[RMDB]
RNA sequence: GGGAACGACUCGAGUAGAGUCGAAAAUGUGGCUCCGGUUCGAAACCGCACAGUCACACCGGGUCUCUUUCAAAUGGAAGAGGUUUCACAAUGGUAUCCCAAACAGGCGUGAAAUGUCUCGUAGUGGUUAUAUGCCAUUACCCGCUUUUCGUGUCUGGGCUACUAACAUGUUCGCAUGUUAGUAGCCAAAAGAAACAACAACAACAAC
Reactivity to 2A3 in 0.01 (KOAc 150mM, MgCl2 10mM, bicine 150mM(pH8.5), 24C), signal-to-noise 2, nucleotides 027 to 156: u070g000u010g000g000c010u070c090c020g000g040u020u140c190g100a170a070a020c010c000g020c030a080c050a060g000u010c000a000c000a000c020c000g010g000g020u030c040u030c010u030u070u000c220a300a300a130u300g030g000a020a000g000a000g040g030u020u180u220c120a120c070a070a050u100g030g000u080a120u060c020c000c000a040a030a010c020a010g010g000c030g000u000g020a000a000a020u030g040u080c000u000c080g000u000a000g000u010g090g000u060u170a280u080a030u300g000c000c000a000u000u010a000c010c000c000g000c020u010u010u010u000c010g020u010g000u000c000u000g020
The record gives the reactivity of an RNA of 207 nucleotides to 2A3.
Conditions: 150 mM KOAc, 10 mM MgCl2 and 150 mM bicine (pH 8.5), 24 C.
It was measured as part of the RMDB library ARCHII.
For 2A3 the reverse transcriptase was SuperScript II with manganese.